[RMDB]
Conditions: 150 mM KOAc, 10 mM MgCl2 and 150 mM bicine (pH 8.5), 24 C. Structure probing data (DMS and 2A3) for a 207-nucleotide construct. 2A3 adducts were read by reverse transcription with SuperScript II with manganese. For DMS, 3,580 sequencing reads were counted. For 2A3, 1,195 sequencing reads were counted.
RNA sequence: GGGAACGACUCGAGUAGAGUCGAAAAGGCGGAAUUGGUCAGCAUCGCAGUAGCGUCUUCAACGGACAUAUUCGUGUUGAAGGCGAUAUGGUUUGCCAGUUUAGUGCGGUUAGCCGCUGCAUCGCAGCCCAUGAUCCCGGCAAUGCGGGUUCGUUCGACUUAAAGAACGCUUCGGCGUUCUUUAAGUAAAAGAAACAACAACAACAAC
Reactivity to DMS in 0.01 (KOAc 150mM, MgCl2 10mM, bicine 150mM(pH8.5), 24C), signal-to-noise 1, nucleotides 027 to 156: g000g030c040g040g020a020a030u000u000g000g010u000c140a090g000c040a110u010c100g030c080a170g010u000a040g010c010g030u000c000u020u000c000a010a040c030g030g010a100c160a150u020a140u000u010c000g020u000g020u000u000g000a070a020g000g030c010g000a020u010a010u000g000g020u000u000u000g040c030c000a050g000u010u000u000a060g030u000g010c010g010g030u010u000a110g020c050c070g000c040u000g010c070a070u010c070g030c040a120g020c010c020c000a090u020g000a080u010c000c010c000g000g020c040a090a110u010g020c020g030g000g020u000u010c030g010u000u000c070g000
Reactivity to 2A3 in 0.01 (KOAc 150mM, MgCl2 10mM, bicine 150mM(pH8.5), 24C), signal-to-noise 2, nucleotides 027 to 156: g090g000c010g000g020a020a080u050u020g000g010u130c050a010g040c030a050u070c100g040c090a030g020u030a020g030c000g000u000c000u010u000c000a000a000c020g110g020a030c110a090u300a140u110u210c090g030u060g000u130u000g000a000a000g010g000c000g010a000u020a010u030g030g000u040u020u060g010c010c000a000g020u030u080u180a110g020u090g060c040g020g010u050u080a020g020c000c010g000c010u000g010c020a000u060c040g030c040a010g010c010c010c000a040u090g020a040u060c010c010c020g000g020c060a040a040u180g060c010g000g000g000u020u040c010g000u080u020c030g070